RNA sequence: GGGAACGACUCGAGUAGAGUCGAAAAGCUUCUUCUUGUUCUCGAGGGCCUUCCUUCGUCGGUGAUCCUGCCUCUCCCUGUCGGUGAAUCCUCCCCUGAGAGGCCUCUUCCUAGGCCCGGAGUCUAUAUACGUGAAGUAGUUCGCUACUUCACGUAUAAAAGAAACAACAACAACAAC
Reactivity to DMS in 0.01 (KOAc 150mM, MgCl2 10mM, bicine 150mM(pH8.5), 24C), signal-to-noise 1, nucleotides 027 to 126: g000c110u000u010c020u000u000c060u000u000g000u000u000c000u000c010g000a120g000g010g020c000c050u000u020c020c020u000u010c050g040u010c040g020g030u000g000a040u030c030c040u000g010c040c030u000c020u000c030c030c030u000g010u010c070g040g000u040g000a140a130u000c010c010u010c010c040c040c040u010g000a170g010a150g030g020c020c010u000c090u000u010c050c020u000a120g020g010c000c000c040g030g000a140g010u000c040u000a080u000